[RMDB]
RNA sequence: GGGAACGACUCGAGUAGAGUCGAAAAGCUUGGCGUUCGCGCCAAGCAAAAAAGCGUACUACUAGUAAGACAGAAACGGUGCUACCCACCUCCCAAAUAGGAGAGGCACCUUUCAAUGACGCUAGUAUCGCAAAAAAGCUACGAUUCGUCGUAGCAACGGACGUAUUGAGUUCGCUCAAUACGUCCGAAAAGAAACAACAACAACAAC
Reactivity to 2A3 in 0.01 (KOAc 150mM, MgCl2 10mM, bicine 150mM(pH8.5), 24C), signal-to-noise 1, nucleotides 027 to 156: g060c030u020u000g030g000c030g130u080u140c300g100c000g000c080c010a000a000g020c040a060a000a000a010a000a000g000c020g070u060a030c020u000a000c000u000a010g010u000a150a290g010a160c060a140g000a000a000a020c120g040g020u000g060c000u000a120c000c000c170a040c000c000u010c000c020c050a110a280a140u300a170g000g000a020g000a000g010g010c000a000c020c020u050u000u000c030a080a030u120g080a050c090g040c000u000a000g020u000a040u070c020g000c000a040a040a000a000a000a020g000c020u000a010c000g060a050u080u120c290g040u050c000g000u190a000g000c030a000a060